[RMDB]
RNA sequence: GGGAACGACUCGAGUAGAGUCGAAAAGUUGACAAGGGGUGGACUUGUUAUGGUUAAUAGAGAUGUCAACCUGAUUGAAUUGAGGGAUGCCUACAUGACUGGGGAAGCAUUGUUUCUGGUUGUGUCUGUGAAGGUGUUGCCAGAGGAGAUUGACAUAGUAGGGGUAGUCAUUCGUGACUACCCCUACAAAAGAAACAACAACAACAAC
Reactivity to 2A3 in 0.01 (KOAc 150mM, MgCl2 10mM, bicine 150mM(pH8.5), 24C), signal-to-noise 1, nucleotides 027 to 156: g000u000u020g060a020c000a000a070g040g030g000g020u000g000g000a010c010u000u050g000u030u090a190u140g060g000u060u030a130a100u070a210g050a000g050a040u100g030u040c050a080a020c050c000u010g030a110u230u140g120a300a200u040u110g040a050g000g040g000a000u110g020c070c000u010a050c000a070u090g060a000c020u000g000g000g020g010a000a020g200c060a030u020u030g030u090u000u080c000u000g000g030u030u050g040u000g010u030c000u160g170u020g050a000a000g010g000u020g000u060u050g020c020c000a000g000a030g040g000a020g000a020u130u220g020a050c030a030u010a000